Structure probing data (2A3 and DMS) for a 177-nucleotide construct.
[RMDB]
RNA sequence: GGGAACGACUCGAGUAGAGUCGAAAAGAGAGCUGCUUCGGCAGCUCUCCGUCUGGUAGUUCCUAUCUCAAUUACCUGUAGUGGCCAACGUCCGGAUAGGAAGAGAGCCCUGCUUCGGCAGGGCUAAGCUAUACACGAUUUUCGAAUCGUGUAUAGCAAAAGAAACAACAACAACAAC
Reactivity to 2A3 in 0.01 (KOAc 150mM, MgCl2 10mM, bicine 150mM(pH8.5), 24C), signal-to-noise 6, nucleotides 027 to 126: g010a000g010a010g000c020u020g010c020u050u060c280g110g010c030a000g000c000u000c000u000c000c000g030u010c030u070g120g050u070a080g070u040u020c000c000u010a020u020c040u020c020a100a300u160u100a090c020c030u110g060u240a090g090u130g120g000c050c050a140a040c090g060u030c040c030g020g010a020u020a030g010g020a030a020g090a020g000a000g010c000c000c000u010g000c000u020u040c160g090g000c000a000g000g010g000c000u000a010a000
Reactivity to DMS in 0.01 (KOAc 150mM, MgCl2 10mM, bicine 150mM(pH8.5), 24C), signal-to-noise 7, nucleotides 027 to 126: g000a020g010a010g010c000u000g020c000u000u010c210g030g010c000a010g000c000u000c000u000c000c020g000u000c050u000g020g010u000a080g010u000u000c010c000u000a040u000c020u010c090a110a090u000u000a070c040c030u000g010u010a090g020u010g010g010c030c060a060a090c170g000u010c120c110g010g010a040u000a030g000g000a080a090g010a150g000a040g000c000c000c000u000g000c000u000u000c190g030g020c000a000g000g000g010c000u000a000a040

DMS adducts were read by reverse transcription with MarathonRT. The data come from the RNA Mapping Database (RMDB), library M2PK50. The reactions ran in a buffer of 150 mM KOAc, 10 mM MgCl2 and 150 mM bicine (pH 8.5), at 24 C.